Chemical mapping of a 177-nucleotide RNA with DMS and 2A3. The DMS profile rests on 25,502 reads. As a SHAPE reagent, 2A3 marks flexible, mostly unpaired nucleotides at the ribose 2'-OH.
RNA sequence: GGGAACGACUCGAGUAGAGUCGAAAAGCAGUCAUGCUGGCGGGUGUGCAGAGUAGCGCUGACAAGGAGAGCAGCAAGGCAAUCGGCGCCCUGCUGGACGCCUGGUUCCAACCCUUCUGCGUCAUGCGGUACAUUACUUUUUCGAAAGUAAUGUACCAAAAGAAACAACAACAACAAC
Reactivity to DMS in 0.01 (KOAc 150mM, MgCl2 10mM, bicine 150mM(pH8.5), 24C), signal-to-noise 9, nucleotides 027 to 126: g010c030a040g010u010c160a070u010g010c030u000g000g020c060g010g000g010u000g030u000g010c020a040g000a070g010u010a110g010c060g020c010u000g000a050c120a130a130g010g000a110g000a120g020c030a060g010c150a080a080g010g010c080a090a120u000c050g010g000c040g010c010c070c020u010g010c060u000g010g000a020c030g010c020c010u000g020g010u000u000c020c030a070a120c070c040c030u000u000c030u000g010c050g000u000c070a060u010g010c300
Reactivity to 2A3 in 0.01 (KOAc 150mM, MgCl2 10mM, bicine 150mM(pH8.5), 24C), signal-to-noise 3, nucleotides 027 to 126: g020c010a000g070u170c030a060u160g020c020u020g040g010c030g010g010g000u060g010u050g100c030a010g010a040g060u120a030g040c010g000c040u020g010a030c050a110a090g200g050a160g060a030g050c030a010g050c070a080a070g130g000c020a030a060u040c030g020g000c010g000c000c000c020u140g100c030u040g000g050a000c010g010c000c000u050g040g020u110u040c030c010a050a140c030c010c000u060u040c030u070g040c020g060u100c040a050u120g040c040
Source: RMDB library OK2TRN, as collected in RNAgym. The reactions ran in a buffer of 150 mM KOAc, 10 mM MgCl2 and 150 mM bicine (pH 8.5), at 24 C.